[RMDB]
RNA sequence: GGGAACGACUCGAGUAGAGUCGAAAAGAUAUGGAACUAAAGGAGCGCGGGGAGUGGUCGGAAACGACCAUGAAAGACGAACUACGCUCCGAUUGGUUCCUAAGUCAAAGGUGCGUUCGCGCACCAACUAAUCGGUGUUGUUCGCAACACCGAUUAGAAAAGAAACAACAACAACAAC
Reactivity to 2A3 in 0.01 (KOAc 150mM, MgCl2 10mM, bicine 150mM(pH8.5), 24C), signal-to-noise 1, nucleotides 027 to 126: g050a000u070a020u170g000g000a010a030c010u040a070a080a060g030g020a010g040c090g000c090g040g030g020g030a150g070u120g000g030u040c010g000g010a070a110a040c000g020a000c000c030a000u040g080a050a070a010g300a020c050g050a080a000c010u060a040c000g020c000u000c010c000g000a010u000u060g010g010u020u000c000c000u000a100a050g070u040c070a130a080a060g000g030u020g000c000g020u040u100c300g000c010g000c140a000c000c000a000a010
Reactivity to DMS in 0.01 (KOAc 150mM, MgCl2 10mM, bicine 150mM(pH8.5), 24C), signal-to-noise 2, nucleotides 027 to 126: g000a040u000a300u040g010g010a000a000c010u000a050a040a240g000g000a000g000c020g050c060g010g000g000g000a300g000u000g000g020u000c000g040g000a110a120a230c000g010a000c000c020a040u010g030a070a150a220g010a100c120g000a300a270c030u010a080c010g010c000u000c000c000g000a070u000u000g000g010u000u000c010c000u010a010a040g040u000c110a080a080a150g000g010u000g010c000g010u000u000c290g010c040g010c010a000c020c010a000a140
Chemical mapping of a 177-nucleotide RNA with 2A3 and DMS. The RNA was probed in 150 mM KOAc, 10 mM MgCl2 and 150 mM bicine (pH 8.5) at 24 C. 2A3 adducts were read by reverse transcription with SuperScript II with manganese. It was measured as part of the RMDB library TTRDEL. Reactivities are given for positions 27 through 126.